[RMDB]
Structure probing data (DMS) for a 177-nucleotide construct. It was measured as part of the RMDB library M2PK90.
RNA sequence: GGGAACGACUCGAGUAGAGUCGAAAAAAAAAGGCACUUCAGGUGGCUCUGGGGCGAAAGUACUGACGACAGACCAGAACCGGGAAGCCGUUGAGUUUAUGUGUGAUGCGACCGGUCUGUCGAAAAACCUGCAUUCUAGAUUCGUCUAGAAUGCAGGAAAAGAAACAACAACAACAAC
Reactivity to DMS in 0.01 (KOAc 150mM, MgCl2 10mM, bicine 150mM(pH8.5), 24C), signal-to-noise 1, nucleotides 027 to 126: a090a010a040a070a070g000g000c020a000c030u000u010c040a020g000g010u000g000g000c050u000c010u010g000g020g000g020c170g030a060a010a020g010u000a080c120u010g010a150c010g000a040c000a030g000a040c040c000a150g000a080a070c110c020g000g000g000a060a110g030c030c030g030u010u010g000a130g010u010u000u010a030u000g020u030g000u000g030a160u010g000c020g000a120c040c030g030g000u010c000u030g000u000c010g000a030a050a020a020a120